The data come from the RNA Mapping Database (RMDB), library OK3TST. An RNA of 207 nucleotides, treated with 2A3 and DMS and read out base by base. The RNA was probed in 150 mM KOAc, 10 mM MgCl2 and 150 mM bicine (pH 8.5) at 24 C. Reactivities are given for positions 27 through 156. 2A3 adducts were read by reverse transcription with SuperScript II with manganese.
[RMDB]
RNA sequence: GGGAACGACUCGAGUAGAGUCGAAAAGUGGUGCAUUUUCGGAGAGAAGGGCUUGUUAGAGCAAUGUAUCGAUGGCUUGUAUGACUUAGAAAUGGGUCCAAGAGGAACUAAACCAACACCACCAACUCAUUUCAUUUAGACCAUUAAGCACAUUAGGGUACAUGUAAGGCUUCGGCCUUACAUGUACAAAAGAAACAACAACAACAAC
Reactivity to 2A3 in 0.01 (KOAc 150mM, MgCl2 10mM, bicine 150mM(pH8.5), 24C), signal-to-noise 3, nucleotides 027 to 156: g030u030g020g000u020g020c090a100u040u040u050u160c100g020g000a010g010a020g010a020a060g000g000g000c000u050u050g090u070u100a090g010a010g100c040a050a080u100g040u050a110u150c050g010a020u050g010g020c020u010u020g030u060a030u050g050a050c010u020u080a030g010a020a010a000u020g000g030g000u040c040c040a110a050g020a050g070g040a090a050c050u090a170a040a070c050c010a030a040c000a030c070c000a000c020c010a010a040c000u020c020a010u020u040u010c020a070u110u020u080a060g040a080c000c080a040u040u070a040a000g020c040a020c010a140u050u200a070g100g000
Reactivity to DMS in 0.01 (KOAc 150mM, MgCl2 10mM, bicine 150mM(pH8.5), 24C), signal-to-noise 1, nucleotides 027 to 156: g070u000g040g010u000g050c030a090u000u000u010u040c040g010g000a130g020a070g030a050a010g000g020g010c010u010u010g000u010u000a060g000a090g020c040a060a010u000g000u020a160u010c040g020a020u010g000g040c040u010u000g000u000a150u000g010a160c100u000u040a050g000a080a090a100u000g020g020g000u000c040c000a040a140g010a100g050g030a040a300c110u000a030a060a100c020c050a030a050c160a100c000c010a070c000c030a120a040c010u020c040a080u010u000u000c040a150u000u000u000a120g010a050c010c000a100u000u000a000a090g010c070a010c040a130u010u000a170g010g000